[RMDB]
RNA sequence: GGGAACGACUCGAGUAGAGUCGAAAAAUCCGAGGGGCCCGACGCCCGGAUCUGGAGAGCACUCCCGGCCGUAUGGUCGAGUGUCCCCCCGGAGGGAGAGAACCACGCGGAGAAGGCGGAAAAAUCAGGAGCCCCAUCUUCGGAUGGGGCAAAAGAAACAACAACAACAAC
Reactivity to DMS in 0.01 (KOAc 150mM, MgCl2 10mM, bicine 150mM(pH8.5), 24C), signal-to-noise 2, nucleotides 027 to 129: a060u010c030c040g000a130g040g000g000g020c000c050c060g120a090c080g030c190c030c050g000g010a020u020c110u000g010g010a030g020a140g010c180a000c060u040c030c160c070g030g000c050c010g020u040a060u080g010g070u150c000g000a040g020u060g020u050c030c000c000c000c040c050g070g000a130g020g010g040a000g000a030g110a130a080c020c020a060c130g050c040g070g000a000g020a030a070g000g070c090g000g000a060a110a030a070a100u090c050a000g010g020a000
Reactivity to 2A3 in 0.01 (KOAc 150mM, MgCl2 10mM, bicine 150mM(pH8.5), 24C), signal-to-noise 2, nucleotides 027 to 129: a030u030c000c020g000a040g000g020g020g060c000c100c040g050a010c000g030c010c000c000g000g000a050u000c000u020g010g010a030g010a040g100c010a000c100u010c090c030c000g010g000c000c000g120u130a130u280g010g000u020c000g030a000g000u010g010u030c000c010c000c010c010c010g020g000a030g000g050g000a010g000a010g000a000a010c000c000a010c060g030c020g000g040a000g000a010a060g000g000c000g010g010a010a020a010a010a010u140c070a040g000g050a020